RNA sequence: GGGAACGACUCGAGUAGAGUCGAAAAAGCACGGCAAUGAGGUUUCCGGGCGUCUGGCCGGUGAACUCCAGCACCGCUUGUGACAUCGGGAGGUUGCCGGUGGGCGUGGAUGUUUGCGCACUGUCGCGUCGUAACAGCGAUUCGUCGCUGUUACGACAAAAGAAACAACAACAACAAC
Reactivity to DMS in 0.01 (KOAc 150mM, MgCl2 10mM, bicine 150mM(pH8.5), 24C), signal-to-noise 2, nucleotides 027 to 126: a060g010c060a080c050g020g010c020a060a040u020g000a060g010g020u000u010u000c010c020g030g010g030c040g010u010c040u000g030g050c030c000g010g030u000g010a020a040c040u010c030c020a110g020c060a050c030c300g010c140u010u000g020u000g010a080c090a080u000c160g000g010g010a020g010g010u000u000g000c010c020g010g020u000g010g020g000c030g040u010g010g000a080u010g010u010u020u000g010c040g010c030a070c080u000g020u010c060g020c090
Reactivity to 2A3 in 0.01 (KOAc 150mM, MgCl2 10mM, bicine 150mM(pH8.5), 24C), signal-to-noise 2, nucleotides 027 to 126: a000g040c020a030c050g020g050c010a020a080u120g010a050g080g090u020u040u060c000c000g030g090g000c020g050u020c030u080g210g000c020c010g000g000u010g000a030a020c020u010c000c050a000g030c010a030c040c120g150c140u110u250g050u050g050a090c020a150u060c110g090g020g000a010g020g010u040u050g000c020c000g040g020u030g000g030g030c020g000u090g000g060a030u030g140u010u100u110g000c020g000c000a090c080u110g010u170c000g020c040